[RMDB]
RNA sequence: GGGAACGACUCGAGUAGAGUCGAAAACGGCUUAUGCGGCUAAUGAUCGUGAUGCCAUGAAGCAAUUGGCCGCGGCACAUCCUGAACAAAUCGAGCGCAUUCAAAAAGGGAUGGGUUUUAUUGAUCAGGAUAGAAAUCAGAUGAUUGGUCAAGCGGCCUCUCAUAACAGUUUCGACUGUUAUGAGAGAAAAGAAACAACAACAACAAC
Reactivity to DMS in 0.01 (KOAc 150mM, MgCl2 10mM, bicine 150mM(pH8.5), 24C), signal-to-noise 3, nucleotides 027 to 156: c060g020g000c020u000u000a090u010g010c030g040g030c000u010a070a120u000g010a110u000c010g020u000g000a140u010g000c080c030a120u010g010a090a160g010c060a140a170u000u010g010g020c000c000g030c060g010g020c080a160c090a050u000c000c000u020g000a070a100c080a070a020a060u000c080g010a050g020c030g000c030a050u000u000c000a030a090a180a130a230g000g000g000a020u000g010g020g060u000u000u000u000a060u000u000g000a160u010c000a040g030g000a080u000a070g000a030a080a080u000c030a130g020a120u000g010a100u000u010g020g020u000c050a060a070g010c000g020g000c100
Reactivity to 2A3 in 0.01 (KOAc 150mM, MgCl2 10mM, bicine 150mM(pH8.5), 24C), signal-to-noise 6, nucleotides 027 to 156: c040g030g000c020u170u110a070u300g020c030g020g010c030u090a100a040u140g080a120u050c060g040u060g060a070u150g070c050c020a060u120g070a070a040g050c070a040a110u080u090g060g000c000c000g010c000g010g000c020a020c010a040u000c010c000u000g000a030a020c070a070a070a040u060c050g010a010g010c140g020c120a000u000u000c010a050a160a180a100a110g180g000g000a010u020g030g120g000u010u020u010u020a020u010u020g020a030u020c010a000g010g010a000u040a060g120a020a120a020u070c030a010g090a230u140g020a030u080u110g060g020u040c030a070a040g020c010g050g010c030